[RMDB]
About this RNA:
An RNA of 177 nucleotides, treated with DMS and read out base by base. It was measured as part of the RMDB library RFMREP. For DMS, 2,286 sequencing reads were counted. DMS adducts were read by reverse transcription with MarathonRT.
RNA sequence: GGGAACGACUCGAGUAGAGUCGAAAAGGGCAAAAGUUAGGCAAGACUUUGGCAAAGCUUGAAUCCAAGUUUUGCCAAAGUUUUGCCCAACUUUUGCCCAAAAUCCGAAACCGUUCGCGGUUUCGGACACGUAUCCUAUCUUCGGAUAGGAUACGUGAAAAGAAACAACAACAACAAC
Reactivity to DMS in 0.01 (KOAc 150mM, MgCl2 10mM, bicine 150mM(pH8.5), 24C), signal-to-noise 1, nucleotides 027 to 126: g010g010g000c000a000a010a000a000g000u010u000a060g000g020c000a010a020g010a010c000u000u000u000g000g010c010a010a030a000g020c000u000u000g010a270a150u010c300c020a000a010g000u000u000u000u000g000c010c000a000a000a000g000u000u000u000u000g000c000c000c010a000a000c000u010u000u000u000g020c010c000c010a000a000a040a110u000c000c000g000a000a010a000c000c010g040u000u010c200g020c020g010g000u000u000u000c000g010g000a010